This 177-nucleotide RNA was probed chemically with DMS and 2A3.
The DMS profile rests on 7,238 reads.
The 2A3 profile rests on 6,736 reads.
2A3 adducts were read by reverse transcription with SuperScript II with manganese.
It was measured as part of the RMDB library OK2TST.
Conditions: 150 mM KOAc, 10 mM MgCl2 and 150 mM bicine (pH 8.5), 24 C.

RNA sequence: GGGAACGACUCGAGUAGAGUCGAAAAACAUCACGAUAACGGCGAACAUAACAGAUGAGGCAUACCUGUACAACUCUGACCUCCUCAUGCUUUCUGCAUGCUUGUUUUAUGCCUCUGAGAUGUCAGACACCAACUUUGAAUUCGUUCAAAGUUGGUGAAAAGAAACAACAACAACAAC
Reactivity to DMS in 0.01 (KOAc 150mM, MgCl2 10mM, bicine 150mM(pH8.5), 24C), signal-to-noise 6, nucleotides 027 to 126: a060c090a080u010c050a100c100g010a060u010a070a110c110g020g010c060g020a090a060c060a070u000a050a110c140a090g000a110u000g010a030g000g010c020a030u010a040c190c090u010g010u000a050c120a070a080c100u000c040u000g000a060c030c030u010c020c060u000c020a020u010g000c020u000u010u010c160u010g020c010a020u000g010c230u000u010g010u000u010u010u000a030u010g000c010c020u000c010u010g000a080g010a070u000g010u000c050a040g010a200
Reactivity to 2A3 in 0.01 (KOAc 150mM, MgCl2 10mM, bicine 150mM(pH8.5), 24C), signal-to-noise 5, nucleotides 027 to 126: a000c020a040u090c040a030c080g100a080u070a210a030c070g040g000c040g030a050a000c040a060u130a080a030c030a060g060a090u050g010a020g000g000c010a010u020a080c000c020u060g050u120a070c040a100a050c070u050c070u080g070a090c010c020u040c000c010u020c020a010u010g000c010u110u230u180c080u070g010c000a020u030g040c050u040u020g040u020u060u010u040a030u050g000c000c020u000c000u000g030a040g010a010u050g030u030c010a010g020a020